This 177-nucleotide RNA was probed chemically with 2A3 and DMS. The reactions ran in a buffer of 150 mM KOAc, 10 mM MgCl2 and 150 mM bicine (pH 8.5), at 24 C.

RNA sequence: GGGAACGACUCGAGUAGAGUCGAAAACAUUAUGUUUUGUUUCUGAGUUUAACCAAAUCACUCAUUAUUUCAAGGAGGAAUUAGGUUAUGUCAGUACAAUUAGAAGUUAAAGAAAGAGCUAUCCGUCGUAUCGAGAGACUUUCGAGUCUCUCGAUACAAAAGAAACAACAACAACAAC
Reactivity to 2A3 in 0.01 (KOAc 150mM, MgCl2 10mM, bicine 150mM(pH8.5), 24C), signal-to-noise 4, nucleotides 027 to 126: c040a050u190u160a110u250g080u040u000u010u000g030u010u160u070c010u010g030a100g060u030u000u000a020a000c000c000a020a010a010u060c020a140c050u000c010a020u040u220a190u070u300u160c180a160a030g120g000a010g020g010a050a090u090u050a140g000g000u000u000a000u010g060u000c010a010g030u020a000c000a000a040u090u060a060g090a240a030g030u050u080a090a120a020g180a090a080a010g100a050g030c040u040a020u120c030c020g120u120c030
Reactivity to DMS in 0.01 (KOAc 150mM, MgCl2 10mM, bicine 150mM(pH8.5), 24C), signal-to-noise 1, nucleotides 027 to 126: c010a090u040u000a080u010g000u000u010u000u000g000u000u000u000c020u000g000a020g030u020u020u000a000a060c000c030a030a100a030u000c250a160c000u010c010a020u000u000a160u040u020u000c300a080a090g020g000a000g010g000a080a010u040u000a070g010g000u000u000a000u010g000u000c010a030g000u000a000c050a000a010u110u000a090g000a090a140g000u000u000a090a070a110g000a040a050a060g000a110g000c090u000a080u000c040c080g020u010c150